[RMDB]
RNA sequence: GGGAACGACUCGAGUAGAGUCGAAAAGAUAGUGUGUCUACCAGCGAUUUAGGUAGUCUCAUUGAUUGUAAUGCGGCUUCAGUUAACCAAAUUGUCUUGCGUAAUUCUAAUGGUGCUUGCAUUUGGAGAACCUUUCACUUCGGUGAAAGGAAAAGAAACAACAACAACAAC
Reactivity to DMS in 0.01 (KOAc 150mM, MgCl2 10mM, bicine 150mM(pH8.5), 24C), signal-to-noise 5, nucleotides 027 to 129: g000a070u030a070g000u010g000u010g010u040c020u050a040c030c030a170g030c190g000a140u050u020u030a120g010g000u020a030g030u000c000u030c000a060u000u000g000a130u060u040g000u000a030a080u000g030c240g010g020c050u030u040c050a000g000u000u020a070a100c000c050a010a010a000u020u030g030u060c050u000u040g050c020g030u030a050a040u000u030c110u060a040a030u000g040g050u040g020c000u030u010g030c030a030u010u000u030g020g000a100g000a100a110
Reactivity to 2A3 in 0.01 (KOAc 150mM, MgCl2 10mM, bicine 150mM(pH8.5), 24C), signal-to-noise 8, nucleotides 027 to 129: g120a040u170a040g050u030g010u010g000u000c000u000a030c000c020a030g070c110g230a150u080u080u240a060g000g010u010a010g030u000c010u000c010a040u060u070g100a100u040u070g130u210a040a040u080g050c000g020g000c000u050u050c040a060g000u040u110a060a030c000c000a010a020a030u100u100g130u120c030u020u050g000c060g070u090a080a110u140u050c080u150a130a140u140g080g010u060g040c010u010u040g000c010a020u010u000u020g000g000a080g020a020a020
Conditions: 150 mM KOAc, 10 mM MgCl2 and 150 mM bicine (pH 8.5), 24 C.
Structure probing data (DMS and 2A3) for a 170-nucleotide construct.
The DMS profile rests on 29,874 reads.
Source: RMDB library 15KLIB, as collected in RNAgym.
The 2A3 profile rests on 12,688 reads.